[RMDB]
RNA sequence: GGGAACGACUCGAGUAGAGUCGAAAAGAUAUGGAACGAGCUUUUGACGCCUUGUUGGUCGGAAACGACCAACCGGGCGAUAAGCUCUUCCUAAGUCAAAACGGGCCUGACUUCGGUCAGGCCCGAAGAGGAAAUUAAGGUUCGCCUUAAUUUCCUCAAAAGAAACAACAACAACAAC
Reactivity to DMS in 0.01 (KOAc 150mM, MgCl2 10mM, bicine 150mM(pH8.5), 24C), signal-to-noise 2, nucleotides 027 to 126: g010a050u000a300u010g000g010a000a000c210g010a000g010c010u000u000u000u000g010a190c080g020c000c000u000u010g000u000u000g010g010u010c010g000g000a100a090a130c010g010a000c000c000a000a000c000c040g000g000g000c000g000a010u000a020a000g020c010u000c000u000u000c000c000u000a080a170g010u000c030a080a040a140a160c010g000g000g000c000c010u000g000a040c000u000u010c170g020g030u000c010a000g000g010c000c000c000g000a000a030
Reactivity to 2A3 in 0.01 (KOAc 150mM, MgCl2 10mM, bicine 150mM(pH8.5), 24C), signal-to-noise 1, nucleotides 027 to 126: g000a020u060a010u140g000g000a030a060c180g000a060g000c000u120u100u120u240g300a180c040g020c010c000u000u000g000u000u000g000g030u000c000g010g010a030a060a070c010g000a000c030c010a000a000c030c000g000g010g000c000g000a000u000a000a000g000c000u020c000u000u000c000c000u010a080a000g070u050c010a030a050a050a090c010g030g000g000c020c010u000g020a020c000u030u110c300g040g000u000c000a000g110g000c000c030c000g020a030a010